[RMDB]
RNA sequence: GGGAACGACUCGAGUAGAGUCGAAAAAAUUCACAAUGCCAAAAUGGUGGCCUAUUAUAAUCAGAGGAUGCUCUAUGUUUACAAACAAGUACAUGAUGAUGAACAUGAGGUACAUUGACAUUUUGAGCUGUCACUUAUAUUUCGAUAUAAGUGACAGAAAAGAAACAACAACAACAAC
Reactivity to DMS in 0.01 (KOAc 150mM, MgCl2 10mM, bicine 150mM(pH8.5), 24C), signal-to-noise 9, nucleotides 027 to 126: a050a080u010u000c020a040c060a050a040u010g000c020c010a030a050a080a080u000g010g030u000g000g010c020c010u010a050u010u000a080u010a150a090u000c030a030g000a210g010g000a070u000g010c030u000c040u000a090u000g010u000u000u010a090c270a080a050a040c080a030a050g010u000a050c080a030u000g000a150u000g010a090u000g000a070a100c180a030u000g000a040g010g010u000a040c030a080u000u000g010a030c040a030u000u000u000u000g000a070g030
Reactivity to 2A3 in 0.01 (KOAc 150mM, MgCl2 10mM, bicine 150mM(pH8.5), 24C), signal-to-noise 6, nucleotides 027 to 126: a000a010u270u090c120a120c090a160a090u180g040c010c010a040a030a010a070u090g070g010u020g040g010c000c010u060a070u230u040a100u080a120a040u040c010a010g020a030g150g020a040u050g030c010u000c020u060a170u110g030u010u060u060a090c060a020a110a010c010a050a000g030u040a030c020a050u080g020a070u030g000a010u060g020a080a000c010a040u070g050a020g020g020u080a090c010a050u020u060g070a020c020a020u040u050u020u050g030a050g040

This 177-nucleotide RNA was probed chemically with DMS and 2A3. For 2A3, 8,077 sequencing reads were counted. It was measured as part of the RMDB library OK2TRN.